Chemical mapping of a 207-nucleotide RNA with DMS and 2A3. 2A3 adducts were read by reverse transcription with SuperScript II with manganese. The reactions ran in a buffer of 150 mM KOAc, 10 mM MgCl2 and 150 mM bicine (pH 8.5), at 24 C. For DMS, 3,275 sequencing reads were counted.
[RMDB]
RNA sequence: GGGAACGACUCGAGUAGAGUCGAAAACGUAAAGCAAGGACGGUCCAAGGGCGAGUCGACCUCCCUCGGCACGAGGACGUGCCUGGUUUUGAGUGGGGGAGGAUGUUACGGACAAAUUCCGUAACCGUGUAGGCCAGCAUCAAAGAUGCGUACCAAGGUACUACAUAGCGUUCGCGCUAUGUAGUACAAAAGAAACAACAACAACAAC
Reactivity to DMS in 0.01 (KOAc 150mM, MgCl2 10mM, bicine 150mM(pH8.5), 24C), signal-to-noise 2, nucleotides 027 to 156: c080g000u010a060a080a060g130c050a110a080g000g010a060c080g000g000u000c080c040a070a190g070g000g030c030g000a110g030u000c030g000a160c010c030u000c010c030c000u000c040g030g030c000a020c010g010a130g010g020a180c060g030u000g000c010c020u000g010g030u000u000u000u000g030a240g010u020g010g010g000g000g000a070g040g000a030u000g000u010u000a010c010g010g010a080c040a200a040a240u010u000c010c000g000u010a020a020c020c170g030u000g020u000a100g020g050c020c030a240g000c020a040u000c080a130a150a070g000a110u000g000c070g000u000a170c000c030a080a180g030
Reactivity to 2A3 in 0.01 (KOAc 150mM, MgCl2 10mM, bicine 150mM(pH8.5), 24C), signal-to-noise 4, nucleotides 027 to 156: c040g030u050a030a050a010g060c040a020a100g050g010a030c030g030g030u030c020c040a060a060g030g020g010c040g020a030g030u050c010g030a120c010c010u010c000c000c000u000c040g030g000c000a000c020g060a160g140g160a100c040g010u000g000c000c000u060g040g070u050u100u180u190g120a110g040u190g000g010g000g000g000a010g000g000a020u070g010u000u000a000c000g000g010a020c110a060a170a060u250u000c010c000g000u000a000a000c010c010g020u060g050u110a030g010g060c030c030a010g000c000a020u070c050a070a110a000g020a000u040g060c020g010u040a100c000c040a010a020g070